[RMDB]
RNA sequence: GGGAACGACUCGAGUAGAGUCGAAAAGAUAUGGAAGAAGUCCGAUCGAUCCUGUGGGAGACUGCACAUCGGAAACGAUGUGAAAGUCUUUGAUCACACAUGGAUCGAUCGGACUUCUUCCUAAGUCGUACCUUAGUUGGUUCGCCAACUAAGGUACAAAAGAAACAACAACAACAAC
Reactivity to DMS in 0.01 (KOAc 150mM, MgCl2 10mM, bicine 150mM(pH8.5), 24C), signal-to-noise 1, nucleotides 027 to 126: g010a040u000a300u010g000g000a020a010g000a040a000g040u000c030c010g050a010u000c000g050a000u000c000c000u010g000u000g000g000g000a020g000a020c010u000g000c000a000c010a020u000c000g020g000a260a130a200c000g040a010u000g050u010g020a050a130a000g000u000c000u000u020u000g010a160u000c260a280c000a020c020a030u030g030g000a000u000c000g010a010u000c000g020g020a000c000u010u000c000u000u010c000c000u010a010a070g030u000c100